RNA sequence: GGGAACGACUCGAGUAGAGUCGAAAAAUUAAAUCAAAGUUUAAAUCAGGGGACAUUGCUUGUGCGACCACUGGAGGAGCCAUACAAUCAAUUAGAGAUAAAGGCAUUAAGUCAGCUAUGAGCAUAGCGAUAAAUAGCUUUUCGAAGCUAUUUAUCGAAAAGAAACAACAACAACAAC
Reactivity to DMS in 0.01 (KOAc 150mM, MgCl2 10mM, bicine 150mM(pH8.5), 24C), signal-to-noise 5, nucleotides 027 to 126: a090u010u010a040a060a070u010c060a070a090a180g000u010u010u000a030a050a120u010c060a070g000g010g000g010a110c110a050u010u000g010c060u000u010g030u010g010c030g010a070c060c070a060c080u010g000g010a100g010g010a120g000c030c030a040u010a070c110a070a040u010c050a060a110u010u000a090g010a120g010a050u010a070a120a060g010g000c020a060u010u000a050a050g000u000c030a060g020c030u000a040u000g000a060g000c070a080u000a070g010
Reactivity to 2A3 in 0.01 (KOAc 150mM, MgCl2 10mM, bicine 150mM(pH8.5), 24C), signal-to-noise 3, nucleotides 027 to 126: a000u010u030a000a020a030u080c050a070a040a110g040u050u130u260a070a080a050u110c040a030g000g000g030g000a000c040a060u090u060g000c020u080u090g020u030g050c010g030a030c000c040a020c060u030g050g030a050g030g060a020g040c020c000a030u060a110c040a020a060u040c000a010a050u130u080a150g040a000g000a110u070a090a100a030g000g000c020a010u100u080a070a010g020u020c010a000g000c010u060a040u130g030a010g010c030a040u090a010g070
This 177-nucleotide RNA was probed chemically with DMS and 2A3. DMS adducts were read by reverse transcription with MarathonRT. The RNA was probed in 150 mM KOAc, 10 mM MgCl2 and 150 mM bicine (pH 8.5) at 24 C. The 2A3 profile rests on 3,601 reads. Values cover nucleotides 27 to 126. It was measured as part of the RMDB library OK2TRN.